[RMDB]
Background
An RNA of 177 nucleotides, treated with 2A3 and DMS and read out base by base. Source: RMDB library OK2TRN, as collected in RNAgym. The RNA was probed in 150 mM KOAc, 10 mM MgCl2 and 150 mM bicine (pH 8.5) at 24 C. 2A3 adducts were read by reverse transcription with SuperScript II with manganese. The 2A3 profile rests on 5,620 reads.
RNA sequence: GGGAACGACUCGAGUAGAGUCGAAAAUACACGUACGCGAUCAGGAUCGAUCCUCAGCGCAUAGUCGAUCGCUAGGAUCUGCUGAUCUCUAGCAUGCAUGGAUCCUAGCUCAUGGGUACCCAUGAUGGUAUAUUCUGGUCUUCGGACCAGAAUAUACAAAAGAAACAACAACAACAAC
Reactivity to 2A3 in 0.01 (KOAc 150mM, MgCl2 10mM, bicine 150mM(pH8.5), 24C), signal-to-noise 4, nucleotides 027 to 126: u110a000c030a010c070g080u090a020c080g000c020g020a010u010c010a010g080g030a090u160c040g010a020u020c040c020u090c170a010g030c010g000c070a080u110a130g190u190c100g130a180u090c020g000c000u010a000g000g020a000u000c020u060g050c000u020g010a030u010c020u010c010u020a040g040c050a030u120g010c000a030u030g020g020a020u010c000c000u020a040g050c030u040c050a050u060g050g010g050u170a140c040c000c000a000u020g010a030u080g070
Reactivity to DMS in 0.01 (KOAc 150mM, MgCl2 10mM, bicine 150mM(pH8.5), 24C), signal-to-noise 5, nucleotides 027 to 126: u010a080c050a040c090g010u000a090c240g010c160g000a030u000c050a040g010g010a110u000c200g000a020u000c000c010u000c170a030g000c020g000c200a090u000a130g010u000c140g010a080u000c050g020c000u000a020g010g010a010u000c000u010g000c040u000g010a020u000c040u000c070u010a200g000c020a040u000g030c040a030u010g000g010a100u000c000c000u010a070g020c110u000c050a050u010g000g000g000u010a150c170c010c000a040u010g000a060u010g020